Description: The record gives the reactivity of an RNA of 177 nucleotides to DMS and 2A3. For 2A3, 905 sequencing reads were counted. Source: RMDB library OK2TST, as collected in RNAgym. The reactions ran in a buffer of 150 mM KOAc, 10 mM MgCl2 and 150 mM bicine (pH 8.5), at 24 C. For DMS, 1,788 sequencing reads were counted.

RNA sequence: GGGAACGACUCGAGUAGAGUCGAAAAAUUAUACACAACCCAUAUUCAUACGUCAUAAAUGAAUCACUGAAAAUUUUUUCGGAAGGUAAAAUGAGUGAAUUGUCUAUUUUCCUAAUAGACAAUGGCGAAUUCGAGGAUUAUUCGUAAUCCUCGAAUUAAAAGAAACAACAACAACAAC
Reactivity to DMS in 0.01 (KOAc 150mM, MgCl2 10mM, bicine 150mM(pH8.5), 24C), signal-to-noise 3, nucleotides 027 to 126: a080u000u010a120u030a130c180a250c130a090a130c040c040c020a140u010a090u000u000c070a060u000a180c040g010u000c040a040u000a120a060a070u010g000a070a070u000c020a030c010u000g000a030a020a080a090u010u010u020u000u000u000c050g020g030a140a090g010g000u000a020a040a040a010u020g000a080g010u000g010a060a070u000u000g000u000c000u000a000u000u000u000u010c070c060u000a080a020u000a000g000a010c000a020a000u000g000g000c020g000
Reactivity to 2A3 in 0.01 (KOAc 150mM, MgCl2 10mM, bicine 150mM(pH8.5), 24C), signal-to-noise 1, nucleotides 027 to 126: a000u090u090a050u030a050c040a010c020a000a150c010c030c010a040u050a100u100u100c050a010u030a170c050g010u000c030a010u050a190a220a070u090g090a080a050u040c000a000c030u000g110a090a080a130a130u090u020u000u000u030u110c050g050g180a080a080g070g030u070a020a100a010a020u080g010a020g150u020g010a070a090u060u060g000u000c030u010a020u000u100u020u000c000c000u040a000a000u000a000g000a010c000a020a000u000g030g000c020g020